[RMDB]
RNA sequence: GGGAACGACUCGAGUAGAGUCGAAAAUGGUUCCGUGGUGUCGCGUGGAAGGCGCGUGCGAGCCGAGAGUGAGUGGGAGCGCGAAUGUGUGGCUUGAGUGUGCGGGCGUGGGGCGUGCAAGGCGAGCAACUGAACACGAAUUCGUUCGUGUUCAGUUAAAAGAAACAACAACAACAAC
Reactivity to DMS in 0.01 (KOAc 150mM, MgCl2 10mM, bicine 150mM(pH8.5), 24C), signal-to-noise 5, nucleotides 027 to 126: u040g020g000u010u010c030c030g040u010g000g020u010g020u010c050g020c030g030u010g000g020a130a080g020g020c030g010c040g010u020g030c040g010a150g000c020c030g000a070g000a100g020u010g020a080g010u010g000g010g010a090g020c050g010c030g000a060a080u030g010u020g010u020g020g010c060u000u020g000a100g020u010g010u000g010c060g010g000g010c070g000u010g000g000g000g000c040g000u010g000c050a050a090g000g010c040g000a110g000c120
Reactivity to 2A3 in 0.01 (KOAc 150mM, MgCl2 10mM, bicine 150mM(pH8.5), 24C), signal-to-noise 6, nucleotides 027 to 126: u160g040g010u050u000c010c020g020u080g030g050u070g020u060c010g000c020g010u060g050g090a140a060g100g020c030g000c030g010u050g030c040g010a020g020c010c030g060a070g000a010g070u100g010a040g030u080g020g030g020a060g020c050g000c020g040a100a070u110g060u040g030u060g050g010c000u050u080g030a060g070u090g020u060g030c020g000g010g010c010g020u060g000g030g000g000c020g000u010g010c020a040a040g060g000c020g020a020g020c000